[RMDB]
RNA sequence: GGGAACGACUCGAGUAGAGUCGAAAAGGGAUGCGCUUUAUUCGCGAUAGCGUAAUGCCUCAAUCAAGGCAGCAAGUGCUGGCGGGUGCUGUCGCCGGUUCGGGUAAUAGAGGUGGUAGCCCUCGAACAUCCGCUGAGCAUUCGUGCUCAGCGGAUGAAAAGAAACAACAACAACAAC
Reactivity to DMS in 0.01 (KOAc 150mM, MgCl2 10mM, bicine 150mM(pH8.5), 24C), signal-to-noise 1, nucleotides 027 to 126: g040g030g030a080u000g000c050g000c020u000u010u010a100u000u030c030g000c070g020a080u010a070g000c030g010u010a090a110u000g010c000c000u010c150a060a090u040c140a180a130g000g000c000a000g010c090a100a110g000u010g000c090u000g000g010c040g010g020g040u000g010c060u000g000u000c080g000c030c030g000g020u000u000c040g000g010g000u000a080a160u000a130g010a150g030g010u000g000g000u000a060g000c010c000c000u000c040g000a120a160